The data come from the RNA Mapping Database (RMDB), library OK2TST. This 177-nucleotide RNA was probed chemically with 2A3 and DMS. DMS adducts were read by reverse transcription with MarathonRT. For 2A3 the reverse transcriptase was SuperScript II with manganese. As a SHAPE reagent, 2A3 marks flexible, mostly unpaired nucleotides at the ribose 2'-OH.

[RMDB]
RNA sequence: GGGAACGACUCGAGUAGAGUCGAAAAGUCUGUCUCUGAAGCGUGAUUUUAAAAUCCCCAUGCCUGUGGCUGCGCUUCCUAUUUCUAGGGCUGGGAAACACUCCUUGCAUCAAGGGGUCACUUACAAUGGAUUAAAUAUAUUCGUAUAUUUAAUCCAAAAAGAAACAACAACAACAAC
Reactivity to 2A3 in 0.01 (KOAc 150mM, MgCl2 10mM, bicine 150mM(pH8.5), 24C), signal-to-noise 2, nucleotides 027 to 126: g020u000c030u030g060u050c010u010c010u090g020a010a030g000c040g010u050g090a090u010u020u090u300a060a100a010a040u110c000c000c000c010a030u100g010c010c000u060g010u050g050g000c030u030g000c040g010c000u010u030c000c000u160a190u090u210u070c040u070a070g000g020g000c000u000g000g010g000a040a020a000c080a000c000u030c000c010u040u030g020c050a200u120c050a110a000g030g000g010g000u010c020a020c010u040u240a050c020a000a070
Reactivity to DMS in 0.01 (KOAc 150mM, MgCl2 10mM, bicine 150mM(pH8.5), 24C), signal-to-noise 4, nucleotides 027 to 126: g020u010c060u000g010u000c030u000c060u010g010a080a060g010c030g030u000g020a100u000u010u010u010a050a120a120a120u010c080c020c000c060a060u010g040c010c020u000g010u010g000g000c140u000g000c040g010c040u000u000c010c080u000a040u000u000u000c100u010a180g010g020g010c020u010g010g020g000a150a080a080c170a020c030u000c000c020u000u000g020c180a130u010c070a030a020g010g010g000g010u000c110a030c140u010u000a080c160a090a170